Chemical mapping of a 177-nucleotide RNA with 2A3 and DMS. DMS adducts were read by reverse transcription with MarathonRT. For 2A3, 8,060 sequencing reads were counted. Source: RMDB library OK1LIB, as collected in RNAgym. 2A3 is a SHAPE reagent: it acylates the 2'-hydroxyl of flexible nucleotides of all four kinds.

[RMDB]
RNA sequence: GGGAACGACUCGAGUAGAGUCGAAAAGAAAGAGAGGUUUUUUGCCGUUCUCGAACUGUGUUUUAUACACUGUGUAUGAAGCGUACUAAAAAUAGUGAGUUCGCUCACGAAAGUACGGCUAAAGAAACCCAACUAUAUUGUUCGCAAUAUAGUUGGGAAAAGAAACAACAACAACAAC
Reactivity to 2A3 in 0.01 (KOAc 150mM, MgCl2 10mM, bicine 150mM(pH8.5), 24C), signal-to-noise 7, nucleotides 027 to 126: g070a000a090a010g130a010g030a050g020g050u030u030u010u040u100u260g050c010c010g030u090u040c020u010c010g020a030a010c030u030g000u000g040u030u020u040u120a140u050a020c030a020c030u090g030u020g010u090a060u170g080a060a000g030c010g000u030a010c020u120a050a070a080a100a080u180a050g050u080g080a010g000u020u110c130g040c060u000c010a010c010g040a080a020a000g020u000a010c010g020g000c030u060a080a020a000g080a010a070a020
Reactivity to DMS in 0.01 (KOAc 150mM, MgCl2 10mM, bicine 150mM(pH8.5), 24C), signal-to-noise 9, nucleotides 027 to 126: g010a090a060a110g000a070g010a080g000g010u000u000u020u030u020u030g010c030c000g010u020u010c000u000c010g000a130a130c060u010g000u000g000u000u010u020u020a090u030a020c010a040c040u010g010u010g010u020a070u010g010a130a060g010c000g010u000a000c020u020a020a070a080a090a100u020a150g000u010g000a010g010u010u050c190g010c000u000c000a000c000g000a080a080a030g010u000a000c010g010g020c020u010a050a080a080g000a100a090a130